RNA sequence: GGGAACGACUCGAGUAGAGUCGAAAAUGUUUUCACUGGGUAGACUAACUAAAAAACACCUAUUUUCUACUAAGAGAAAAUAGGUGUUUUUAUUUACUUUUAGCAUACGAAAAUACUAUUUUAGUAGUAUCUGGAUUCUUUUCGAAGAAUCCAGAUAAAAAGAAACAACAACAACAAC
Reactivity to DMS in 0.01 (KOAc 150mM, MgCl2 10mM, bicine 150mM(pH8.5), 24C), signal-to-noise 1, nucleotides 027 to 126: u060g000u010u000u010u010c030a090c090u000g000g050g030u000a020g000a240c090u030a070a090c240u040a000a000a010a030a000a000c000a030c010c000u000a000u000u000u000u020c000u000a090c250u040a150a300g000a010g000a010a000a010a000u000a000g000g000u000g000u040u000u000u000u000a020u090u050u010a030c100u000u010u000u020a000g000c220a060u000a060c050g030a180a070a010a030u020a000c010u010a040u000u040u030u020a050g030u020a030g000
Chemical mapping of a 177-nucleotide RNA with DMS. The data come from the RNA Mapping Database (RMDB), library RFM100. Values cover nucleotides 27 to 126. DMS adducts were read by reverse transcription with MarathonRT. Conditions: 150 mM KOAc, 10 mM MgCl2 and 150 mM bicine (pH 8.5), 24 C.